[RMDB]
RNA sequence: GGGAACGACUCGAGUAGAGUCGAAAAACGUUGAUAUGGAUUUACUCCGAGUAGACGAACUACCACGAACAGGGGAAACUCUACCCGUGGCGUCUCCGUUUGACGAGUAAGUCCUAAGUCAACAUGCAUACAGUACGCUUCGGCGUACUGAAAAGAAACAACAACAACAAC
Reactivity to 2A3 in 0.01 (KOAc 150mM, MgCl2 10mM, bicine 150mM(pH8.5), 24C), signal-to-noise 3, nucleotides 027 to 129: a020c070g000u000u000g000a000u000a000u030g000g000a000u000u000u000a000c010u000c000c010g010a020g000u000a000g020a000c010g010a010a020c070u220a070c070c000a000c000g020a050a020c020a060g000g010g000g000a000a000a000c010u000c000u000a020c000c020c010g000u000g010g010c000g000u000c000u110c040c020g020u140u160u160g020a010c000g000a000g000u000a000a000g000u000c000c000u000a000a000g000u000c000a010a000c010a020u120g030c000a060u130a170
Reactivity to DMS in 0.01 (KOAc 150mM, MgCl2 10mM, bicine 150mM(pH8.5), 24C), signal-to-noise 3, nucleotides 027 to 129: a070c010g000u010u080g000a060u060a200u000g000g000a020u030u010u040a030c000u010c010c050g020a080g020u080a000g000a010c040g000a000a000c060u100a300c060c000a070c020g000a060a160c170a150g000g020g010g080a000a000a000c020u020c000u040a150c270c130c040g040u010g030g010c000g040u010c030u040c000c000g030u070u150u020g040a000c300g020a020g020u020a000a010g020u020c010c000u030a000a030g000u000c000a010a010c080a060u130g000c100a080u140a090

Description:
An RNA of 170 nucleotides, treated with 2A3 and DMS and read out base by base. Source: RMDB library 15KLIB, as collected in RNAgym.